Chemical mapping of a 177-nucleotide RNA with DMS.
The DMS profile rests on 738 reads.
RNA sequence: GGGAACGACUCGAGUAGAGUCGAAAAUGAUGCCGAUGGAAAUUUUACCCACUGGGGCUGGCUUAAUGUGCGAGAGAUCACUAUGGGUUUACGCCAAACCGGUCUCCAUGAAAAUGUAGAUGUGCAGUCCCCGAUCAGUAUUCGUACUGAUCGGGGAAAAAGAAACAACAACAACAAC
Reactivity to DMS in 0.01 (KOAc 150mM, MgCl2 10mM, bicine 150mM(pH8.5), 24C), signal-to-noise 1, nucleotides 027 to 126: u010g010a140u000g040c000c010g010a120u010g010g000a060a110a110u000u000u000u000a250c040c000c010a210c170u020g020g000g000g000c010u000g010g000c110u000u000a070a090u010g020u070g010c010g010a200g000a040g000a050u000c010a040c240u010a100u000g000g010g000u000u000u000a030c070g010c010c020a010a040a130c110c030g010g000u000c020u010c040c010a030u010g000a030a050a120a080u010g010u010a080g000a080u000g000u000g020c020a120g010